[RMDB]
RNA sequence: GGGAACGACUCGAGUAGAGUCGAAAAAGAGUAGAGUCCCUGGGACCUCCUUCAGAGCCAUGGACAAUUUCAGCUUCCCUGGAAGGAGCAUCAGACUCAGUGCUAAAAGGGUGCACCCAGGCAGAAACGAAAGUAUGCUGUUCGCAGCAUACUUUCGAAAAGAAACAACAACAACAAC
Reactivity to DMS in 0.01 (KOAc 150mM, MgCl2 10mM, bicine 150mM(pH8.5), 24C), signal-to-noise 2, nucleotides 027 to 126: a130g020a080g010u000a100g000a150g010u010c060c010c050u010g020g010g000a210c300c000u000c010c010u010u000c050a220g000a050g000c050c050a070u000g000g010a070c100a090a070u000u000u020c070a140g030c120u000u010c040c070c020u000g010g010a040a080g000g000a030g000c030a040u000c050a080g010a030c010u000c050a120g000u000g000c040u000a060a070a110a110g000g030g000u010g020c060a130c040c020c040a040g010g000c160a100g000a070a090a110

This 177-nucleotide RNA was probed chemically with DMS. The reactions ran in a buffer of 150 mM KOAc, 10 mM MgCl2 and 150 mM bicine (pH 8.5), at 24 C. Reactivities are given for positions 27 through 126.